[RMDB]
RNA sequence: GGGAACGACUCGAGUAGAGUCGAAAAGCUGCGGUGAUCGUUGUUGAUUGCUUUGUCCUCGUUGACUAAAUACCAACUUCGGGAAGUCAGCGGCCUGCAAUGAAUUGUAAACCGUUCCAUUGUGUUCACGUGAUGAGAUCUUCAACGUCUCGCAUGAGCGUUUAGGAACAUUCGUGUUCCUAAACGCAAAAGAAACAACAACAACAAC
Reactivity to 2A3 in 0.01 (KOAc 150mM, MgCl2 10mM, bicine 150mM(pH8.5), 24C), signal-to-noise 1, nucleotides 027 to 156: g060c040u000g050c020g000g080u100g020a090u090c020g000u020u050g000u020u010g000a090u060u040g050c030u140u130u130g050u070c010c030u030c040g010u000u000g020a000c000u040a130a200a070u170a150c020c020a030a270c080u260u190c140g000g060g000a000a010g010u000c000a020g010c000g040g010c010c040u090g000c010a000a090u080g000a060a000u090u170g080u120a050a060a150c060c060g020u050u030c050c000a010u000u090g010u030g080u180u140c060a050c140g070u140g040a070u100g000a050g020a060u010c000u030u170c000a010a010c030g020u020c010u000c010g090c000a010u090g040a000
Notes: Chemical mapping of a 207-nucleotide RNA with 2A3. 2A3 adducts were read by reverse transcription with SuperScript II with manganese. The RNA was probed in 150 mM KOAc, 10 mM MgCl2 and 150 mM bicine (pH 8.5) at 24 C. The 2A3 profile rests on 539 reads.